This 207-nucleotide RNA was probed chemically with DMS and 2A3.
As a SHAPE reagent, 2A3 marks flexible, mostly unpaired nucleotides at the ribose 2'-OH.
2A3 adducts were read by reverse transcription with SuperScript II with manganese.
The DMS profile rests on 3,666 reads.
The 2A3 profile rests on 1,909 reads.
DMS adducts were read by reverse transcription with MarathonRT.

[RMDB]
RNA sequence: GGGAACGACUCGAGUAGAGUCGAAAAAUAGUUAAGGUUGCGCUUGCCUAUUUAGGCAUACUUGUCAGGAUGGCGCGUUGCAGUCCAACAAGAUCCAGGGACUGUACAGAAUUUUCCUAUACCUCGAAAAACAUUCGCUUGUUCGCAAGCGAAUGAACUAACCUUUUAACUUCGGUUAAAAGGUUAGAAAAGAAACAACAACAACAAC
Reactivity to DMS in 0.01 (KOAc 150mM, MgCl2 10mM, bicine 150mM(pH8.5), 24C), signal-to-noise 2, nucleotides 027 to 156: a120u000a070g020u010u000a060a060g030g060u010u000g000c050g010c050u000u010g010c000c040u000a260u000u000u000a070g040g030c000a030u000a040c100u010u010g030u000c030a090g020g010a080u010g000g030c000g020c140g020u010u000g000c000a060g000u000c010c010a100a160c070a060a110g010a160u000c080c050a200g010g000g010a050c020u030g050u000a180c160a130g010a080a120u000u010u000u010c010c020u000a110u000a050c040c030u010c020g000a100a100a090a120a170c020a030u000u000c000g010c000u000u010g010u000u010c300g060c000a020a010g020c000g010a010a000u000g010a020a090
Reactivity to 2A3 in 0.01 (KOAc 150mM, MgCl2 10mM, bicine 150mM(pH8.5), 24C), signal-to-noise 3, nucleotides 027 to 156: a000u080a010g060u070u060a090a030g050g070u070u070g060c000g010c020u060u140g000c000c000u090a200u130u200u300a050g020g000c010a020u070a110c050u160u160g090u120c060a050g070g030a090u120g000g000c030g000c040g050u030u050g000c010a000g000u000c000c010a030a030c030a220a090g090a160u090c060c050a020g020g010g020a000c010u000g010u020a010c000a000g100a070a070u040u020u070u060c000c000u030a030u040a110c000c040u050c060g040a030a030a010a030a060c010a000u000u000c000g000c000u000u000g000u070u050c240g000c110a000a000g000c000g010a000a000u010g000a010a000